[RMDB]
RNA sequence: GGGAACGACUCGAGUAGAGUCGAAAAGCACGUCCGGCAAGGCCCGUGCGAACACUUGAGCUCCGGCUUGCCCGCUCUUGUGGAUUAGGACGUUCUAGCUCCGGCUUGGCCGCUAGUUCGUCCGAAAAUGACCAUCGUCAUUCGUGACGAUGGUCAUAAAAGAAACAACAACAACAAC
Reactivity to DMS in 0.01 (KOAc 150mM, MgCl2 10mM, bicine 150mM(pH8.5), 24C), signal-to-noise 1, nucleotides 027 to 126: g000c030a030c000g000u010c020c040g010g060c070a300a040g050g010c150c110c060g030u030g000c010g000a180a070c070a010c000u000u000g000a020g000c000u000c250c280g000g000c020u000u080g000c110c000c040g000c000u000c030u000u000g000u000g000g000a040u010u000a120g060g010a000c010g040u000u010c020u000a000g000c050u000c070c040g030g000c060u030u060g040g000c030c090g030c000u010a020g000u000u010c000g000u000c000c000g020a090a020a020
Reactivity to 2A3 in 0.01 (KOAc 150mM, MgCl2 10mM, bicine 150mM(pH8.5), 24C), signal-to-noise 2, nucleotides 027 to 126: g030c000a000c010g050u010c020c000g100g020c110a080a090g110g010c000c070c000g000u010g000c020g010a070a030c060a010c070u040u050g000a000g010c010u100c140c050g110g000c070u030u130g050c020c010c030g000c010u040c000u030u030g050u020g030g000a050u060u120a060g000g000a000c010g010u000u030c010u000a000g030c010u030c120c050g080g120c110u110u160g160g030c000c010g000c010u000a000g000u000u000c000g000u000c000c000g000a000a000a000

Conditions: 150 mM KOAc, 10 mM MgCl2 and 150 mM bicine (pH 8.5), 24 C.
Chemical mapping of a 177-nucleotide RNA with DMS and 2A3.
For DMS, 1,970 sequencing reads were counted.